[RMDB]
RNA sequence: GGGAACGACUCGAGUAGAGUCGAAAAAGCUACGGUACGCCGUAGCAUCAGCCUACUUUAUGUAUAGCUUAGUUUGUCGAUAUGAGGCAUAAUGCCCUACAACGUAGCGGUGUCAUAUAAUUGAGAAGUCUAAAUUUAAGGAUUAGCGUUCUCAAUCAUGCGACACUUUAAUCGCUAUCCCAUAUUUAAUUAGGGAAUGGGACUCUUCACCGAGGUUGUAAAAUGAGACAAACGAUUUUAGCUGUAUAGUCCUACUACGGUAGGACAUCAAUCAAUUCGUUGAUUGAAAAAGAAACAACAACAACAAC
Reactivity to DMS in 0.01 (KOAc 150mM, MgCl2 10mM, bicine 150mM(pH8.5), 24C), signal-to-noise 7, nucleotides 027 to 266: a110g010c000u000a010c000g010g000u010a110c180g050c000c000g010u000a000g010c000a020u020c150a170g010c020c010u000a090c110u020u010u000a140u030g010u000a000u000a010g000c010u000u010a140g000u000u000u000g010u000c000g010a210u010a080u000g010a190g020g000c000a140u030a110a140u010g000c010c000c100u000a020c010a010a010c010g010u000a010g000c010g010g010u000g000u000c000a020u000a010u000a050a010u000u000g000a010g010a080a200g000u010c000u000a010a040a090u010u020u030a150a170g020g010a090u000u000a000g000c080g010u000u000c000u000c000a010a010u000c040a010u000g000c100g000a010c000a010c010u010u010u020a100a120u030c030g000c010u000a050u000c000c000c000a010u000a100u010u010u010a090a130u010u020a130g010g010g000a080a020u000g000g000g010a060c010u000c000u000u000c300a100c300c170g000a010g000g010u000u000g000u000a010a060a080a070u010g010a300g000a010c010a000a010a010c000g000a150u010u010u010u000a020g000c010u000g010u000a010u000a070g010u000c000c000u000a000c000u000a070c150g030g020u000a000g000g010a000c000a020
Reactivity to 2A3 in 0.01 (KOAc 150mM, MgCl2 10mM, bicine 150mM(pH8.5), 24C), signal-to-noise 8, nucleotides 027 to 266: a010g010c000u000a000c000g010g010u040a040c240g040c050c000g000u000a000g000c000a010u040c020a000g030c000c010u070a120c050u180u240u120a160u190g010u000a010u020a010g000c010u050u020a020g000u000u010u000g010u000c010g020a030u020a100u260g100a160g030g010c030a070u160a240a130u300g010c010c000c010u000a000c000a010a000c030g060u010a000g010c020g040g010u000g010u000c010a010u050a010u000a220a040u020u000g000a000g000a020a020g060u070c020u040a070a100a120u150u220u150a150a070g130g040a060u030u020a020g020c090g240u060u030c000u010c000a010a010u010c010a010u050g010c010g010a010c000a000c000u030u050u080a070a050u120c000g000c000u010a000u010c010c000c010a040u040a220u110u230u160a300a300u150u210a110g110g030g030a010a020u010g000g000g030a050c000u010c010u090u100c060a040c080c060g010a010g010g000u000u000g010u000a020a020a060a100u160g030a040g000a060c000a000a000a000c000g000a010u030u180u030u070a000g000c000u000g000u010a020u050a020g010u000c010c000u000a000c010u010a010c160g080g000u000a000g000g000a000c000a000
The record gives the reactivity of an RNA of 307 nucleotides to DMS and 2A3. For DMS the reverse transcriptase was MarathonRT. The DMS profile rests on 30,990 reads. Source: RMDB library POS240, as collected in RNAgym. 2A3 adducts were read by reverse transcription with SuperScript II with manganese.